RNA sequence: GGGAACGACUCGAGUAGAGUCGAAAAUGUGAUUAUGUUUACACUGGUGGUAAAGAAUCAGGCAUUAUGGCUCGUGUUAUUUGCUAUCCACGUUUUCCUAAAACUGACGAGCAGUUGAUGGAUGAAGGCCUCAGCCUGAAUUCGUUCAGGCUGAGGCAAAAGAAACAACAACAACAAC
Reactivity to DMS in 0.01 (KOAc 150mM, MgCl2 10mM, bicine 150mM(pH8.5), 24C), signal-to-noise 1, nucleotides 027 to 126: u000g050u000g010a050u020u000a040u000g040u000u010u000a070c050a030c060u010g010g030u010g010g020u000a000a030a040g000a100a060u000c070a100g000g000c020a120u000u010a060u010g010g010c000u000c040g030u020g000u000u000a110u010u000u010g010c060u000a030u000c060c000a070c090g000u000u000u000u020c000c010u000a080a100a000a090c020u010g000a130c140g010a090g040c000a100g020u000u000g010a140u000g000g000a060u000g000a180a110g010
Reactivity to 2A3 in 0.01 (KOAc 150mM, MgCl2 10mM, bicine 150mM(pH8.5), 24C), signal-to-noise 1, nucleotides 027 to 126: u060g030u040g000a130u000u190a040u210g120u020u170u070a020c030a000c010u040g150g020u150g000g060u050a070a030a020g060a040a080u120c070a040g000g040c010a000u060u210a060u250g140g000c020u050c060g040u110g000u050u070a150u010u040u030g110c020u070a110u230c000c000a070c080g010u050u020u010u000c010c000u040a050a020a000a000c040u090g060a030c080g000a020g180c000a010g050u040u000g020a080u060g000g070a090u030g030a110a020g100